RNA sequence: GGGAACGACUCGAGUAGAGUCGAAAAACAGUAAACGAGGUUAUUGAUUGGACAUCUUUUCGGAAAGAUCCUGGUUGGACUCCCGAUUUGUUCCGGGCCUUCGACCGCUUGACUUCCUCGUGUCCAGGGACGGGGUACCUUUCGAGGUACCCCGUCCAAAAGAAACAACAACAACAAC
Reactivity to 2A3 in 0.01 (KOAc 150mM, MgCl2 10mM, bicine 150mM(pH8.5), 24C), signal-to-noise 1, nucleotides 027 to 126: a010c010a100g180u220a000a000a090c030g110a030g000g000u140u220a200u150u120g160a120u110u040g060g000a010c000a070u090c000u090u150u120u000c090g100g070a000a260a000g000a030u000c000c030u060g030g020u000u070g050g000a010c040u040c020c000c060g010a000u000u000u220g080u140u010c150c050g010g000g050c000c020u110u000c000g030a000c000c050g050c080u070u170g000a040c020u080u050c000c000u000c010g020u010g090u000c000c010a020g070